[RMDB]
RNA sequence: GGGAACGACUCGAGUAGAGUCGAAAAAGUUCGCGCUUCCGUGAAACGCGAAAAUCGGACGGUGGCUGGAAGUCGCAUCGCAAAACCGCGGCAAGUGGAGUUAGCGAGAGGAGGCUGGGUUUUGGCUAGAACACACGGUACUUCGGUACCGUGUGAAACUAGUUAAAUCCUUCGGGAUUUAACUAGUAAAAGAAACAACAACAACAAC
Reactivity to DMS in 0.01 (KOAc 150mM, MgCl2 10mM, bicine 150mM(pH8.5), 24C), signal-to-noise 1, nucleotides 027 to 156: a140g000u000u010c000g000c020g020c030u010u000c030c190g030u000g010a040a040a020c000g030c020g020a020a020a070a060u000c060g000g010a120c030g010g040u000g010g020c020u000g000g000a100a080g030u010c020g070c060a130u020c060g040c060a060a040a060a100c060c060g020c020g050g010c040a060a090g000u010g010g000a130g000u010u010a170g040c040g010a110g000a080g010g000a080g000g000c060u000g010g010g020u000u000u010u000g000g010c090u000a080g010a110a230c020a010c000a010c000g010g000u000a000c000u000u010c210g010g010u000a010c010c000g060u000g000u010g010a020a080
Reactivity to 2A3 in 0.01 (KOAc 150mM, MgCl2 10mM, bicine 150mM(pH8.5), 24C), signal-to-noise 2, nucleotides 027 to 156: a000g070u020u030c010g010c010g010c050u100u030c090c030g060u070g040a080a030a030c020g000c000g040a050a010a010a060u120c060g040g010a020c010g030g060u020g050g020c110u070g030g020a070a080g020u030c020g000c040a050u070c040g050c060a080a070a030a030c040c050g000c000g050g030c170a120a070g020u100g050g010a070g020u080u090a020g030c020g020a020g000a020g050g020a010g050g000c080u050g020g040g010u010u090u100u040g030g030c010u030a040g060a170a000c000a000c000a000c000g000g000u020a000c000u020u080c170g050g000u010a010c000c000g010u000g000u000g010a000a000
Source information:
The record gives the reactivity of an RNA of 207 nucleotides to DMS and 2A3. The RNA was probed in 150 mM KOAc, 10 mM MgCl2 and 150 mM bicine (pH 8.5) at 24 C. Source: RMDB library M2RFPK, as collected in RNAgym. High DMS reactivity at an A or C suggests that its Watson-Crick edge is free.